[RMDB]
An RNA of 207 nucleotides, treated with 2A3 and DMS and read out base by base. The data come from the RNA Mapping Database (RMDB), library OK3TST. The 2A3 profile rests on 1,773 reads. The reactions ran in a buffer of 150 mM KOAc, 10 mM MgCl2 and 150 mM bicine (pH 8.5), at 24 C.
RNA sequence: GGGAACGACUCGAGUAGAGUCGAAAAGUCUGGCUGGUGGUACUGGUGAAGCACAGAUGGUGGAAGUACCACAAGCUGCCGCACAGAUUGUUGACGUACCUGAGAAAGAGGUUUCCACUGAGGACGAAGCACAGACAGAAAGCGGACGCAAGAAAGCCGUAACACGUAGUUUCGACUACGUGUUACGAAAAGAAACAACAACAACAAC
Reactivity to 2A3 in 0.01 (KOAc 150mM, MgCl2 10mM, bicine 150mM(pH8.5), 24C), signal-to-noise 3, nucleotides 027 to 156: g040u020c050u040g040g040c010u030g000g030u030g000g000u010a020c000u040g140g010u120g100a100a020g050c050a020c020a100g240a110u120g040g070u040g010g050a030a010g020u030a020c000c000a010c010a020a010g000c020u040g010c020c020g020c030a050c040a080g040a100u060u060g040u050u050g020a060c050g050u090a170c010c040u060g050a070g070a040a150a010g080a040g030g020u030u050u000c030c010a090c050u050g050a040g000g020a000c020g030a010a030g000c030a010c010a060g110a020c010a010g070a050a070a010g030c020g000g010a050c040g010c050a030a060g100a160a120a030g050c040
Reactivity to DMS in 0.01 (KOAc 150mM, MgCl2 10mM, bicine 150mM(pH8.5), 24C), signal-to-noise 2, nucleotides 027 to 156: g000u020c040u000g020g010c030u000g020g110u000g010g010u000a090c000u000g100g020u000g000a150a160g050c050a160c030a150g020a070u020g060g030u000g000g000a300a120g000u000a030c040c010a030c000a080a060g030c020u010g050c000c060g030c100a240c100a080g000a090u000u000g050u000u010g020a190c120g060u000a120c050c030u030g020a120g060a070a070a060g000a130g010g000u000u010u010c000c000a160c040u010g030a120g040g000a110c040g020a080a030g000c050a110c030a050g000a150c120a080g000a060a040a110g000c050g020g020a050c030g030c050a080a040g000a070a130a110g010c070